[RMDB]
RNA sequence: GGGAACGACUCGAGUAGAGUCGAAAAUCAAAAAUUAAGUCAUCAAAAUCCAGUAUGUAUUUGACAUGGCUGAACGGUAACUUUUUACUGGUGAAAGGUAGGCCAUUCAUCUCUGACAUAAACGAAGCCCCGAGAGCAAUGGAGGGAUCAGAGCACAAUGAAAAUAAUAGUUCGCUAUUAUUUUCAUAAAAGAAACAACAACAACAAC
Reactivity to DMS in 0.01 (KOAc 150mM, MgCl2 10mM, bicine 150mM(pH8.5), 24C), signal-to-noise 2, nucleotides 027 to 156: u020c030a040a020a090a100a130u000u000a060a090g040u000c040a060u000c010a090a060a140a170u000c080c010a100g020u000a100u000g020u000a100u010u010u020g000a100c060a040u000g040g040c020u000g000a060a080c060g040g040u000a060a080c050u000u000u000u000u030a260c040u000g020g040u000g010a060a070a060g000g030u000a120g040g000c030c010a100u000u000c040a050u000c020u000c030u030g090a070c020a100u000a060a040a100c030g000a180a180g000c050c000c010c040g010a110g000a090g080c040a050a050u030g020g000a090g010g010g010a070u000c040a080g010a080g030c080a070c060a100
Reactivity to 2A3 in 0.01 (KOAc 150mM, MgCl2 10mM, bicine 150mM(pH8.5), 24C), signal-to-noise 3, nucleotides 027 to 156: u050c020a090a040a050a030a040u130u180a070a040g060u060c040a090u040c030a100a110a060a110u030c050c020a030g060u070a050u100g050u010a100u050u050u080g080a080c060a050u010g000g000c020u040g050a150a030c020g050g010u040a020a090c000u040u060u090u120u220a080c070u090g060g000u030g070a090a020a000g080g010u040a020g000g040c000c000a000u020u010c010a060u020c030u020c060u050g040a040c030a080u130a080a120a040c040g050a070a010g050c000c000c000c030g060a060g000a000g060c020a050a040u080g010g010a050g050g010g000a010u060c020a010g030a020g020c030a020c010a050
An RNA of 207 nucleotides, treated with DMS and 2A3 and read out base by base.
DMS adducts were read by reverse transcription with MarathonRT.
The 2A3 profile rests on 1,811 reads.
The RNA was probed in 150 mM KOAc, 10 mM MgCl2 and 150 mM bicine (pH 8.5) at 24 C.